[RMDB]
RNA sequence: GGGAACGACUCGAGUAGAGUCGAAAAGAUAUGGAUCGUAUGACCUACCCACCUCGAAGGAUCGGAAACGAUCCUCGAGAGGGCAAUGUACGAUCCUAAGUCAAAGUUCUCUGUUCGCAGAGAACAAGUACUGGUAGGGGUUCGCCCCUACCAGUACAAAAGAAACAACAACAACAAC
Reactivity to 2A3 in 0.01 (KOAc 150mM, MgCl2 10mM, bicine 150mM(pH8.5), 24C), signal-to-noise 1, nucleotides 027 to 126: g060a040u130a010u250g010g010a010u010c000g020u040a000u060g230a190c000c050u050a070c030c020c020a200c120c000u040c000g120a280a120g010g000a000u000c010g000g010a020a050a070c030g020a000u000c000c000u010c000g000a000g030a000g000g010g000c070a060a100u300g000u000a000c030g020a010u020c000c010u040a130a030g040u060c100a150a070a040g010u000u000c010u030c000u000g010u040u080c300g070c080a000g020a000g000a020a020c010a010a000
Reactivity to DMS in 0.01 (KOAc 150mM, MgCl2 10mM, bicine 150mM(pH8.5), 24C), signal-to-noise 1, nucleotides 027 to 126: g000a040u000a300u000g000g010a000u000c010g010u000a000u000g000a150c180c090u010a050c060c000c000a130c080c000u000c000g000a090a040g010g000a000u000c010g010g000a100a180a190c010g010a000u000c000c000u000c020g020a040g000a270g010g000g010c100a010a060u000g000u000a010c000g000a010u000c000c000u000a030a110g000u010c070a120a120a160g000u000u000c000u000c000u000g000u010u010c240g020c010a010g000a020g000a000a010c010a060a130